[RMDB]
RNA sequence: GGGAACGACUCGAGUAGAGUCGAAAAAAGAACAGGCCUAGUUUUUUAAGAAGCCACAAAAGUGUCUUUGGAUGAUUAGGAUCUAAGGGGCCAACAGCUUUGCAAUAACAGCAUAAAUAUUGUGGGCUGGAUGGACAGGCACCAAAUGGGGACAUUAGUAUAUACGUCAUUUCGAUGACGUAUAUACAAAAGAAACAACAACAACAAC
Reactivity to 2A3 in 0.01 (KOAc 150mM, MgCl2 10mM, bicine 150mM(pH8.5), 24C), signal-to-noise 3, nucleotides 027 to 156: a000a000g070a080a020c050a040g010g000c020c010u030a030g040u040u070u030u010u010u050a100a060g020a040a000g010c040c010a020c040a010a190a060a080g010u010g010u020c010u040u030u040g030g000a020u040g020a040u060u080a040g010g000a010u020c020u090a050a080g040g010g040g000c000c020a000a000c000a020g060c010u150u270u300g000c010a010a000u040a060a100c030a110g120c050a020u110a180a140a030u090a040u040u010g010u040g010g010g000c000u000g000g060a040u040g000g020a010c030a030g000g020c020a010c040c000a020a070a100u070g000g000g000g000a010c030a030u060u000a010
Reactivity to DMS in 0.01 (KOAc 150mM, MgCl2 10mM, bicine 150mM(pH8.5), 24C), signal-to-noise 2, nucleotides 027 to 156: a090a080g000a110a100c070a070g030g010c010c000u000a060g010u000u000u000u000u000u000a080a200g000a070a060g040c040c020a070c070a060a100a110a120g010u000g010u000c020u000u000u000g010g000a040u000g000a040u000u010a080g000g020a070u000c050u010a090a070g000g020g020g000c020c000a010a070c010a030g020c000u000u000u010g070c030a040a030u010a060a100c110a120g020c160a150u010a070a080a160u020a030u000u010g010u010g010g020g000c000u000g000g000a150u000g010g000a040c070a010g000g030c010a020c000c010a030a090a100u010g000g010g030g000a100c070a090u000u010a140